An RNA of 207 nucleotides, treated with DMS and 2A3 and read out base by base. The data come from the RNA Mapping Database (RMDB), library OK3TST. Reactivities are rounded to 0.1 and cut off at 0 and 3. The DMS profile rests on 2,977 reads.
[RMDB]
RNA sequence: GGGAACGACUCGAGUAGAGUCGAAAAACACUGUGGGAAGACACAGCAACAACAUGGCCAUCUGUAAGCCACGAAGAGAGCUCUCACCAGGAACUGAUGGAUAGCACCUGGAUCUUGGACUGCUCAGAUAGGUUUAUACGAUCUAGUCUGUGGUAUAUAUCCUCCUACGAUUCGUCGUAGGAGGAUAAAAAGAAACAACAACAACAAC
Reactivity to DMS in 0.01 (KOAc 150mM, MgCl2 10mM, bicine 150mM(pH8.5), 24C), signal-to-noise 2, nucleotides 027 to 156: a090c040a040c010u000g020u000g000g000g000a090a070g010a160c050a030c030a040g020c010a110a050c040a050a130c040a060u000g010g030c010c030a120u020c040u000g010u000a100a070g050c020c000a080c080g000a190a120g000a150g000a040g030c020u010c030u010c020a250c030c010a030g000g020a090a050c070u000g020a160u000g020g020a170u000a070g030c040a070c010c000u000g030g010a110u000c030u000u000g000g030a060c090u000g000c010u000c030a030g000a070u000a050g010g000u000u000u000a080u000a090c150g020a010u000c010u000a020g020u010c020u000g010u000g010g040u010a080u000a170
Reactivity to 2A3 in 0.01 (KOAc 150mM, MgCl2 10mM, bicine 150mM(pH8.5), 24C), signal-to-noise 3, nucleotides 027 to 156: a030c020a000c030u010g010u010g030g020g050a150a060g140a020c020a010c010a020g110c040a020a070c010a020a010c020a080u050g030g000c040c010a040u030c060u040g070u090a050a050g050c020c010a020c070g060a110a040g040a010g010a010g020c000u000c020u030c090a040c020c010a010g000g020a040a070c020u060g050a120u130g150g130a130u140a050g010c030a040c030c000u020g090g000a080u020c010u020u040g020g010a020c020u060g000c000u050c010a000g040a070u090a070g000g030u040u020u060a110u060a040c150g030a030u000c030u000a020g190u020c010u030g020u040g030g060u020a070u030a000